Source information: Structure probing data (2A3 and DMS) for a 177-nucleotide construct. DMS adducts were read by reverse transcription with MarathonRT. 2A3 adducts were read by reverse transcription with SuperScript II with manganese.
RNA sequence: GGGAACGACUCGAGUAGAGUCGAAAAGUAAGAAGUAGAGGAAGCCGAUGUUCCGUCGUACGUUUUGAAAAACGAACCAGGGAGUGUGUCUGAUUGGCGAGUCUAACCUGAUUAUCAGGGAAGGCGUUCUAAUCCAUAGUUUCGACUAUGGAUUAGAAAAAGAAACAACAACAACAAC
Reactivity to 2A3 in 0.01 (KOAc 150mM, MgCl2 10mM, bicine 150mM(pH8.5), 24C), signal-to-noise 9, nucleotides 027 to 126: g050u100a020a060g040a090a020g040u180a020g030a040g030g070a080a020g010c000c020g030a040u070g050u090u010c020c010g050u020c030g010u030a040c010g010u010u010u080u140g140a100a090a000a000a010c020g010a010a010c030c020a040g030g010g020a040g010u090g010u030g040u050c060u070g060a160u050u040g020g010c050g020a030g000u000c000u030a100a070c000c000u010g020a150u150u210a150u300c010a000g000g010g000a020a020g020g000c010g000u010
Reactivity to DMS in 0.01 (KOAc 150mM, MgCl2 10mM, bicine 150mM(pH8.5), 24C), signal-to-noise 8, nucleotides 027 to 126: g010u020a060a060g000a070a090g010u010a050g010a070g000g000a090a080g010c050c030g000a060u000g010u010u000c010c040g000u010c180g010u010a060c040g010u000u000u000u020g010a060a080a070a060a030c030g010a080a050c040c070a100g000g010g010a070g020u010g010u010g000u010c090u010g010a070u010u000g000g010c050g010a070g010u000c010u010a050a250c010c000u000g000a210u030u020a100u020c010a010g000g000g010a140a040g010g020c020g010u010